[RMDB]
RNA sequence: GGGAACGACUCGAGUAGAGUCGAAAAUGGGCCGUAUCCAGAAAAUUUCUGGUGCGAACCUGAGCCGUAACUGGGUGAUGAUCCCGCAUGUUACUCACUUCGACAAAACCGAUAUCACCGAGCUGGAGUGGCAUUUACUAUUCGUAGUAAAUGCCACAAAAGAAACAACAACAACAAC
Reactivity to DMS in 0.01 (KOAc 150mM, MgCl2 10mM, bicine 150mM(pH8.5), 24C), signal-to-noise 2, nucleotides 027 to 126: u000g020g000g030c240c000g000u000a060u020c000c010a040g010a010a130a190a140u000u010u000c000u000g000g010u000g020c040g050a050a090c010c000u000g000a140g020c080c160g020u000a050a080c050u000g010g020g020u000g020a080u020g040a100u000c020c000c010g010c160a070u000g000u010u000a050c010u000c100a130c100u000u000c020g040a100c060a020a160a150a050c080c030g000a000u000a090u000c060a110c010c000g000a080g020c050u000g010g000a300
Reactivity to 2A3 in 0.01 (KOAc 150mM, MgCl2 10mM, bicine 150mM(pH8.5), 24C), signal-to-noise 2, nucleotides 027 to 126: u050g010g010g000c030c000g000u000a010u080c030c000a030g100a040a150a160a220u140u230u010c000u010g010g030u000g000c000g000a000a030c000c000u010g030a020g100c070c060g020u010a030a030c040u070g020g000g030u080g050a250u120g050a050u070c000c000c030g030c070a070u210g000u040u020a010c020u030c020a030c030u000u030c010g030a020c030a010a090a000a010c000c010g000a010u020a030u080c050a060c040c050g010a030g060c020u020g000g020a060
About this RNA:
This 177-nucleotide RNA was probed chemically with DMS and 2A3. For 2A3, 2,002 sequencing reads were counted. Source: RMDB library OK2TST, as collected in RNAgym. Values cover nucleotides 27 to 126.